[RMDB]
RNA sequence: GGGAACGACUCGAGUAGAGUCGAAAAUCCAGUACGUUCGCGUACUGGAAAAGUCGCGGCUUGAGGGCGUGUACGGCAGCGCACACACACGACCCUCAAGCGAAAGUCCGUACUUCGGUACGGACAACCAUUUAGAACACUUCGGUGUUCUAAAUGGAAAAGAAACAACAACAACAAC
Reactivity to DMS in 0.01 (KOAc 150mM, MgCl2 10mM, bicine 150mM(pH8.5), 24C), signal-to-noise 6, nucleotides 027 to 126: u000c000c000a010g000u000a000c000g020u000u010c200g020c010g020u000a010c000u000g010g000a010a020a050a100g010u000c070g020c120g020g000c000u000u000g000a010g010g000g020c010g010u000g010u000a090c130g010g000c090a130g010c170g030c060a080c040a110c130a040c010a030c020g000a170c000c000c000u000c000a000a000g010c010g000a030a060a110g000u000c010c000g000u000a010c000u000u010c160g020g010u000a010c000g000g000a000c000a020a070
Reactivity to 2A3 in 0.01 (KOAc 150mM, MgCl2 10mM, bicine 150mM(pH8.5), 24C), signal-to-noise 9, nucleotides 027 to 126: u020c000c000a000g000u010a010c020g010u020u060c230g000c010g120u000a000c000u000g000g060a020a000a000a010g070u070c050g010c060g300g030c010u000u010g010a000g010g000g000c020g010u010g010u020a030c060g060g030c080a160g100c100g070c110a050c000a000c000a000c000a010c140g300a300c040c000c000u000c000a000a000g000c000g000a000a000a000g000u000c000c000g000u000a010c000u010u060c230g090g000u000a000c000g000g000a000c000a000a010